[RMDB]
Structure probing data (2A3) for a 177-nucleotide construct.
The RNA was probed in 150 mM KOAc, 10 mM MgCl2 and 150 mM bicine (pH 8.5) at 24 C.
Source: RMDB library RFM100, as collected in RNAgym.

RNA sequence: GGGAACGACUCGAGUAGAGUCGAAAAUAAGUCCCUUAACGAGCGCAACCCCUAUCGUUAGUUGCCCACGGUUCGGCCGGGUACUCUAGCGAGACUGCCGGCGUUAAGCCGGAGGAAGGUGGGGAUGGGGGAUAUUCGGAUUCGUCCGAAUAUCCCCAAAAGAAACAACAACAACAAC
Reactivity to 2A3 in 0.01 (KOAc 150mM, MgCl2 10mM, bicine 150mM(pH8.5), 24C), signal-to-noise 1, nucleotides 027 to 126: u210a060a000g070u050c020c020c000u000u060a120a080c160g020a040g090c060g020c040a050a300c000c000c000c000u010a050u020c000g000u020u020a020g000u040u000g040c010c030c060a100c060g000g050u050u080c150g020g000c000c010g000g000g040u010a020c050u040c000u010a000g000c000g000a000g030a030c020u040g000c000c000g070g000c000g050u090u120a080a090g000c020c000g020g040a040g000g000a010a020g000g080u100g070g000g000g000a010u070g010